[RMDB]
The record gives the reactivity of an RNA of 207 nucleotides to 2A3. Conditions: 150 mM KOAc, 10 mM MgCl2 and 150 mM bicine (pH 8.5), 24 C. For 2A3, 1,112 sequencing reads were counted.

RNA sequence: GGGAACGACUCGAGUAGAGUCGAAAAUCACGCCCACCCGCACGGCUGCUCCGAGAGAGGAGAGCUCUCUGCCGCUAGUCGAGCGGACAACCAGAGUGACUCUCCUGCCCUAUUUUCUACGGAGAGCCGGCGGUGGAGUCCCCAGGGUAAAACACGACCUUUAGAACACGUUCGCGUGUUCUAAAGGAAAAGAAACAACAACAACAAC
Reactivity to 2A3 in 0.01 (KOAc 150mM, MgCl2 10mM, bicine 150mM(pH8.5), 24C), signal-to-noise 2, nucleotides 027 to 156: u040c010a000c090g000c000c020c000a000c000c040c040g010c020a300c110g010g000c010u280g130c000u120c000c010g000a010g000a000g010a000g040g010a000g000a000g000c000u000c000u000c000u010g010c000c010g000c030u070a060g180u280c100g130a010g000c020g000g000a000c010a040a090c050c030a040g020a040g030u070g160a300c000u020c000u010c010c000u010g020c040c050c030u040a190u160u050u060u050c000u080a170c000g000g000a010g000a000g000c000c010g000g010c000g000g000u020g000g020a010g050u070c000c000c010c000a040g020g010g010u170a080a120a100a070c170a070c110g110a130
Values cover nucleotides 27 to 156.